An RNA of 177 nucleotides, treated with DMS and 2A3 and read out base by base. Source: RMDB library OK2TST, as collected in RNAgym. The RNA was probed in 150 mM KOAc, 10 mM MgCl2 and 150 mM bicine (pH 8.5) at 24 C. For DMS the reverse transcriptase was MarathonRT.
[RMDB]
RNA sequence: GGGAACGACUCGAGUAGAGUCGAAAACUACAGAGCUAGAUCCACUUGAUGACUACCCGGACUAUGCCUUUUUGUUAGCGCAAACAAUGCAAGCUAAUCCUAAUAGUUUAGGCAUCCUUAUUUGUGGGAGCCAUCAACUAUUCGUAGUUGAUGGCUCAAAAGAAACAACAACAACAAC
Reactivity to DMS in 0.01 (KOAc 150mM, MgCl2 10mM, bicine 150mM(pH8.5), 24C), signal-to-noise 2, nucleotides 027 to 126: c020u000a060c150a050g010a070g010c070u000a110g030a090u030c020c050a030c090u000u020g000a090u000g010a040c060u020a110c060c060c100g000g000a110c110u000a070u010g010c020c010u000u010u010u000u000g020u020u020a050g030c090g000c050a060a080a080c210a050a040u000g000c080a070a110g000c010u000a020a040u010c050c020u000a060a060u010a100g010u010u010u000a010g010g010c090a040u000c020c050u020u000a130u000u010u010g000u010g010g000
Reactivity to 2A3 in 0.01 (KOAc 150mM, MgCl2 10mM, bicine 150mM(pH8.5), 24C), signal-to-noise 3, nucleotides 027 to 126: c050u090a040c020a040g110a020g090c050u070a000g010a130u000c000c020a020c070u050u090g050a070u070g040a100c050u060a070c010c010c030g000g010a030c030u050a030u120g020c000c000u030u070u000u060u110g080u020u050a010g040c000g000c070a040a090a060c040a180a110u090g000c000a130a010g000c010u010a000a070u070c040c000u050a090a060u030a160g090u070u040u040a040g000g020c030a020u030c010c010u180u300a270u170u170u100g060u080g030g100